The record gives the reactivity of an RNA of 207 nucleotides to 2A3 and DMS. The DMS profile rests on 4,182 reads. Values cover nucleotides 27 to 156.
RNA sequence: GGGAACGACUCGAGUAGAGUCGAAAACUUCGCUCAAGGGUCGGGUCUGGGUCUCAAAUUAUUGAGCUACGGUUAAUGUUGCCACCUGAGGCAUUAACAAGAGACUAGUAGGUUAGCUGCGUUGUGUUAGCCUUGCUGGCUGGCGCGACAUCGCGGCGGAGUAUGAUUACUUCGGUAAUCAUACUCCAAAAGAAACAACAACAACAAC
Reactivity to 2A3 in 0.01 (KOAc 150mM, MgCl2 10mM, bicine 150mM(pH8.5), 24C), signal-to-noise 6, nucleotides 027 to 156: c010u120u090c050g000c000u000c030a060a140g050g040g070u120c070g070g050g100u080c100u100g060g030g050u050c070u050c120a110a160a100u290u180a090u050u050g010a000g000c010u000a000c010g000g000u000u010a000a000u000g010u010u010g000c010c010a010c000c010u010g010a010g010g010c000a000u000u000a000a000c010a010a010g020a020g090a060c110u100a080g130u030a010g040g000u040u110a020g000c000u010g000c010g010u010u040g010u010g000u010u010a010g000c000c030u110u240g100c150u110g030g000c000u000g010g000c010g000c000g020a020c010a040u090c070g000c000g020g000c010
Reactivity to DMS in 0.01 (KOAc 150mM, MgCl2 10mM, bicine 150mM(pH8.5), 24C), signal-to-noise 1, nucleotides 027 to 156: c060u010u000c080g030c030u000c030a060a080g000g000g000u000c030g010g030g040u010c060u000g010g010g010u000c000u000c030a050a070a110u000u010a130u010u010g000a030g000c030u000a150c020g040g000u000u000a010a030u000g020u000u010g000c000c060a070c030c010u000g020a300g010g000c020a030u010u000a000a040c000a060a060g010a210g020a080c100u000a080g000u000a050g010g030u000u000a040g020c010u000g030c000g010u000u010g010u000g020u020u000a020g010c000c010u000u000g030c190u030g010g020c010u000g000g020c010g020c010g010a060c000a080u010c040g040c010g020g060c090